[RMDB]
RNA sequence: GGGAACGACUCGAGUAGAGUCGAAAAUUUCAGUAGAUUUUCGCCUUUAAAAGAAUAAAUUCCAUUAAAAAAAGGUAAAAAGAAAAAUCUAUUCACUGAACUUGCCGAUAGAAUUUGCAAAUGUGUCAGACUGUAUCAUGUUCGCAUGAUACAGUCUAAAAGAAACAACAACAACAAC
Reactivity to 2A3 in 0.01 (KOAc 150mM, MgCl2 10mM, bicine 150mM(pH8.5), 24C), signal-to-noise 1, nucleotides 027 to 126: u000u000u000c040a010g000u000a000g000a000u000u000u020u020c010g020c000c000u050u030u000a230a160a010a040g100a170a060u150a110a080a150u170u060c000c010a130u080u130a000a170a050a080a000a000a140g010g000u180a240a260a000a000a000g080a020a010a000a000a000u000c000u000a050u130u050c070a030c020u130g040a040a020c040u030u020g000c000c000g030a020u010a040g160a090a010u000u140u070g050c070a030a050a080u110g040u030g040u140c060
The data come from the RNA Mapping Database (RMDB), library RFM100.
This 177-nucleotide RNA was probed chemically with 2A3.
Reactivities are rounded to 0.1 and cut off at 0 and 3.
2A3 adducts were read by reverse transcription with SuperScript II with manganese.
The 2A3 profile rests on 407 reads.